[RMDB]
RNA sequence: GGGAACGACUCGAGUAGAGUCGAAAAAUUACGUCGCGGUUUUUUAUCAUUAUUUCGCUAAUCUAUCGCAUGAGACCGUGUCGACUAAUAGACGCAUAGAAGAUUCCACAUGGUGCAGUCACGCUCAUUCCUGUAUAUCUAUGACCGUGUCUACAUCAAGUCAGAGAAACUUCGGUUUCUCUGACUUAAAAGAAACAACAACAACAAC
Reactivity to 2A3 in 0.01 (KOAc 150mM, MgCl2 10mM, bicine 150mM(pH8.5), 24C), signal-to-noise 1, nucleotides 027 to 156: a000u090u040a050c040g000u010c010g040c040g050g080u070u000u050u030u110u300a160u220c040a040u000u300a160u170u300u160c080g010c050u100a090a050u260c070u180a270u160c040g000c010a010u100g010a000g000a000c010c010g000u010g010u090c000g000a010c000u070a010a010u000a040g070a030c010g000c040a030u050a050g130a030a020g010a120u070u020c040c000a050c000a100u200g000g000u000g000c030a000g000u000c000a000c070g010c000u030c010a030u060u150c010c040u080g210u100a040u050a000u130c010u030a050u040g010a010c020c020g000u000g030u000c030u040a050c000a000u030c040

Chemical mapping of a 207-nucleotide RNA with 2A3.
Conditions: 150 mM KOAc, 10 mM MgCl2 and 150 mM bicine (pH 8.5), 24 C.
The 2A3 profile rests on 338 reads.
For 2A3 the reverse transcriptase was SuperScript II with manganese.
Values cover nucleotides 27 to 156.